[RMDB]
RNA sequence: GGGAACGACUCGAGUAGAGUCGAAAAGCUGAGAAAUUCGUUUCUCAGCACUGGAAAUUAAGCCGAAAGGCUAGCCAUUCCUUAUUUGGCGAAAGCCUGGCAUGAGCCUCCACUUCGGUGGAGGCAAUAGACAUACUGAAUUCGUUCAGUAUGUCUAAAAAGAAACAACAACAACAAC
Reactivity to 2A3 in 0.01 (KOAc 150mM, MgCl2 10mM, bicine 150mM(pH8.5), 24C), signal-to-noise 8, nucleotides 027 to 126: g000c000u000g000a000g020a010a050a020u090u100c170g050u030u000u010c000u000c000a000g010c000a010c020u020g050g090a040a160a200u180u100a220a050g000c010c010g060a120a040a010g000g000c000u000a000g000c000c010a030u050u090c010c010u120u170a270u180u160u070g020g000c010g020a120a040a010g000c010c020u010g030g050c070a050u130g070a020g020c000c000u000c000c000a010c010u040u050c220g100g000u000g000g000a000g010g000c000a000a000
Reactivity to DMS in 0.01 (KOAc 150mM, MgCl2 10mM, bicine 150mM(pH8.5), 24C), signal-to-noise 8, nucleotides 027 to 126: g000c000u000g000a000g010a010a010a040u010u010c180g010u000u000u000c000u000c000a010g010c000a020c110u010g000g000a070a080a100u010u000a100a060g020c000c010g010a110a090a130g010g020c000u000a070g000c010c000a070u000u000c050c030u000u020a120u010u010u000g000g010c000g010a110a070a140g020c000c000u000g000g010c160a090u010g010a150g010c000c000u000c000c000a020c010u000u010c160g030g020u000g000g000a010g010g010c000a000a000